Background: Chemical mapping of a 177-nucleotide RNA with 2A3 and DMS. The reactions ran in a buffer of 150 mM KOAc, 10 mM MgCl2 and 150 mM bicine (pH 8.5), at 24 C. The DMS profile rests on 1,556 reads. For 2A3, 2,618 sequencing reads were counted. For DMS the reverse transcriptase was MarathonRT.

RNA sequence: GGGAACGACUCGAGUAGAGUCGAAAAGAUAUGGACAUGACACCGGAGCGAAGAACUAGAUCGGAAACGAUCUAGGGAGCUCGUGUAUGUCCUAAGUCAAAUCGCUGGUGGUUCGCCACCAGCGAAAUCAAUGCUCUUGGUUCGCCAAGAGCAUUGAAAAAGAAACAACAACAACAAC
Reactivity to 2A3 in 0.01 (KOAc 150mM, MgCl2 10mM, bicine 150mM(pH8.5), 24C), signal-to-noise 2, nucleotides 027 to 126: g020a000u030a000u060g010g010a000c010a020u030g040a090c050a040c150c300g300g040a030g000c080g260a300a010g010a020a010c000u000a000g000a010u000c010g010g000a030a020a010c010g000a010u000c000u020a000g010g000g000a010g010c020u030c100g000u060g020u020a000u020g000u000c000c000u000a030a010g000u000c010a050a020a250u040c010g010c000u010g040g000u050g020g090u040u080c300g080c110c000a010c040c010a020g000c010g000a010a000a000
Reactivity to DMS in 0.01 (KOAc 150mM, MgCl2 10mM, bicine 150mM(pH8.5), 24C), signal-to-noise 2, nucleotides 027 to 126: g010a030u000a190u030g000g010a010c000a060u000g000a020c000a200c300c300g040g010a030g000c000g010a070a100g010a090a200c020u000a000g010a000u000c000g030g000a060a090a070c010g000a010u000c000u000a020g000g000g010a050g020c000u000c070g020u000g020u010a030u010g000u000c000c000u010a000a070g000u000c020a100a130a160u010c000g030c000u000g000g010u000g010g020u000u010c260g030c010c000a030c000c000a000g000c000g020a000a010a080